[RMDB]
RNA sequence: GGGAACGACUCGAGUAGAGUCGAAAAAUGCCGAUUACGGCCGGCGCGCUACGGCAUUAAUUAGCAUAUCGUACGGCUAUAAUUAUACGUACGGCCGGCUACGCGGCAUGCUAGCUACGGCAUUAUACCUACAGGAACGUUUCGACGUUCCUGUAGGAAAAGAAACAACAACAACAAC
Reactivity to 2A3 in 0.01 (KOAc 150mM, MgCl2 10mM, bicine 150mM(pH8.5), 24C), signal-to-noise 1, nucleotides 027 to 126: a000u000g010c020c000g070a100u110u150a090c120g020g010c000c000g010g010c130g000c000g000c160u010a010c010g030g030c020a000u000u070a010a050u020u020a010g040c000a020u050a050u240c140g150u160a080c160g000g000c010u020a020u060a150a030u100u070a040u020a020c020g000u010a010c010g020g000c000c050g020g010c000u010a020c020g000c000g000g000c010a000u020g030c020u030a030g000c010u080a040c090g030g000c000a010u030u110a040u190a100
Reactivity to DMS in 0.01 (KOAc 150mM, MgCl2 10mM, bicine 150mM(pH8.5), 24C), signal-to-noise 2, nucleotides 027 to 126: a020u000g010c000c000g010a140u000u000a090c170g020g000c010c020g010g020c010g020c060g020c190u020a080c010g000g030c120a050u000u000a030a030u010u000a020g010c020a040u010a150u010c240g020u020a070c270g000g040c060u000a070u030a050a080u000u000a050u000a060c010g000u000a010c000g000g010c030c010g000g000c010u000a080c270g000c020g000g030c010a030u000g040c070u000a090g010c050u010a140c070g030g020c030a090u000u020a140u000a170